An RNA of 177 nucleotides, treated with 2A3 and DMS and read out base by base. DMS adducts were read by reverse transcription with MarathonRT. 2A3 adducts were read by reverse transcription with SuperScript II with manganese. The RNA was probed in 150 mM KOAc, 10 mM MgCl2 and 150 mM bicine (pH 8.5) at 24 C. It was measured as part of the RMDB library OK1LIB.
[RMDB]
RNA sequence: GGGAACGACUCGAGUAGAGUCGAAAAGAAAAGAUGAUCUUGGCUUUCUCAUCGACCGCUAUGUGCGAGUGAAGAAGUUGAUCCUUAGUCGCAGACUCACUUAUCAAAGCGUAUGCGUGAAACAAAAGGGUAAUCUAUACUUCGGUAUAGAUUACCCAAAAGAAACAACAACAACAAC
Reactivity to 2A3 in 0.01 (KOAc 150mM, MgCl2 10mM, bicine 150mM(pH8.5), 24C), signal-to-noise 4, nucleotides 027 to 126: g080a010a080a000a000g120a060u230g030a090u060c000u050u080g020g000c000u040u100u030c010u040c010a040u050c040g070a120c000c070g000c120u110a070u190g080u160g040c000g000a040g040u110g020a080a050g010a030a020g070u060u120g040a050u090c020c000u020u080a010g090u040c010g000c000a020g010a120c020u010c020a060c030u090u140a120u270c050a200a080a020g010c000g000u060a040u080g030c010g050u120g090a070a050a060c060a020a060a040a040
Reactivity to DMS in 0.01 (KOAc 150mM, MgCl2 10mM, bicine 150mM(pH8.5), 24C), signal-to-noise 3, nucleotides 027 to 126: g050a130a080a030a070g000a140u010g010a060u000c050u000u000g000g030c040u010u020u000c020u050c060a060u000c010g000a110c140c050g000c070u020a050u040g060u010g020c090g010a110g000u000g000a080a040g010a140a210g020u000u020g000a030u010c060c090u020u020a090g000u000c020g020c040a110g000a300c060u000c080a030c040u020u010a080u000c130a060a070a020g000c070g000u000a030u000g000c060g010u000g000a090a010a030c080a080a040a060a080